[RMDB]
RNA sequence: GGGAACGACUCGAGUAGAGUCGAAAAAAAAGUGCUCUGGAAAAUCGUAGUUGUGUGCUAUAGCGAAUUCUUUCCAUAGCAAAACGACUUGACUUAUUUUUAGAGAGUUCUUGUCUAUUAAAUUGGUAUCCGAUACGGAGUUCGCUCCGUAUCGGAUAAAAGAAACAACAACAACAAC
Reactivity to 2A3 in 0.01 (KOAc 150mM, MgCl2 10mM, bicine 150mM(pH8.5), 24C), signal-to-noise 1, nucleotides 027 to 126: a010a010a010a010g040u010g000c010u010c000u000g090g000a000a010a010a010u020c020g060u050a000g040u080u100g000u000g100u170g120c010u010a000u000a140g050c140g150a130a030u170u040c100u060u040u000c000c000a000u000a000g040c000a000a000a000a210c010g060a000c000u000u000g040a000c000u020u020a100u060u020u000u240u150a260g010a040g000a000g200u010u030c000u000u010g020u000c010u000a090u080u240a040a100a140u070u130g050g000u040